Background: The data come from the RNA Mapping Database (RMDB), libraries RFM100 and RFMREP. Chemical mapping of a 177-nucleotide RNA with DMS and 2A3.

[RMDB]
RNA sequence: GGGAACGACUCGAGUAGAGUCGAAAACACUGCUGGUUAGCUACGUUCGGAAGGGAUAACCGCUGAAAGCAUCUAAGCGGGAAGCCUGUUCCAAGAUGAGGUUUCUCACCCCCUCGAGGGGGUAAGGUUCCACAGGAAGUUUCGACUUCCUGUGGAAAAAAGAAACAACAACAACAAC
Reactivity to DMS in 0.01 (KOAc 150mM, MgCl2 10mM, bicine 150mM(pH8.5), 24C), signal-to-noise 3, nucleotides 027 to 126: c040a170c110u010g020c040u000g000g040u000u000a050g040c030u010a070c090g000u000u010c140g010g020a140a200g010g000g000a020u010a140a260c000c010g010c000u000g010a100a130a110g020c120a040u010c030u000a170a030g000c010g010g000g000a060a110g000c020c020u000g020u010u000c020c010a060a100g010a110u020g010a090g000g010u000u000u000c000u000c170a060c000c000c000c020c010u030c280g040a200g020g000g000g000g020u010a010a030g000g020
Reactivity to 2A3 in 0.01 (KOAc 150mM, MgCl2 10mM, bicine 150mM(pH8.5), 24C), signal-to-noise 2, nucleotides 027 to 126: c120a030c050u090g010c020u060g030g080u080u140a010g000c010u060a020c040g050u050u080c040g010g010a000a020g010g000g010a020u020a110a000c010c000g020c000u000g020a100a030a020g110c000a020u070c060u140a050a000g000c010g020g000g000a080a010g010c000c000u140g260u070u000c000c010a000a000g000a060u060g050a030g050g000u030u010u000c010u000c000a030c000c050c000c000c000u180c170g080a300g000g000g000g020g000u010a000a010g010g020
The reactions ran in a buffer of 150 mM KOAc, 10 mM MgCl2 and 150 mM bicine (pH 8.5), at 24 C.